[RMDB]
RNA sequence: GGGAACGACUCGAGUAGAGUCGAAAAUCGAGCUUGAGUUGCGAGUCGGGGGGAUCGUCCUCGUUAUCAACGUCAAAGCCAAUAAUAACUGGCAAAGAAAAACAAAACCUAGCUUUCGCUGCCUAAUAAGCAGUAGCAUAGCUGAUCCUCCGUGCAUCGAUGUAUUAUUGUUCGCAAUAAUACAUCGAAAAGAAACAACAACAACAAC
Reactivity to 2A3 in 0.01 (KOAc 150mM, MgCl2 10mM, bicine 150mM(pH8.5), 24C), signal-to-noise 7, nucleotides 027 to 156: u090c010g000a020g050c020u050u050g040a080g080u080u060g070c030g040a030g050u070c030g000g000g000g000g000g030a020u170c010g080u080c020c020u020c010g020u040u040a070u090c040a020a030c020g030u030c020a060a040a010g010c010c020a030a010u200a160a020u120a090a090c080u030g000g000c000a040a090a060g070a030a100a040a010a010c080a030a100a010a020c020c060u060a020g000c000u020u030u030c020g000c000u010g000c000c010u100a130a050u240a150a010g000c010a010g000u040a040g010c040a020u020a010g000c010u020g010a040u030c000c010u010c020c040g040u060g000c010a060u010
Reactivity to DMS in 0.01 (KOAc 150mM, MgCl2 10mM, bicine 150mM(pH8.5), 24C), signal-to-noise 2, nucleotides 027 to 156: u000c040g010a070g020c020u000u020g000a150g030u000u020g050c020g030a250g050u000c050g000g040g010g000g020g000a080u010c000g010u020c010c010u000c030g000u010u000a110u000c210a080a090c090g000u010c050a140a130a300g000c010c030a010a050u000a100a150u000a060a140c120u000g020g010c000a080a040a130g000a070a050a090a060a190c020a110a050a060a050c040c010u000a140g020c020u000u000u000c020g000c000u010g000c010c000u000a120a100u010a130a060g000c000a040g000u000a080g080c090a050u000a000g020c010u000g010a040u010c080c000u000c010c020g000u000g000c080a240u000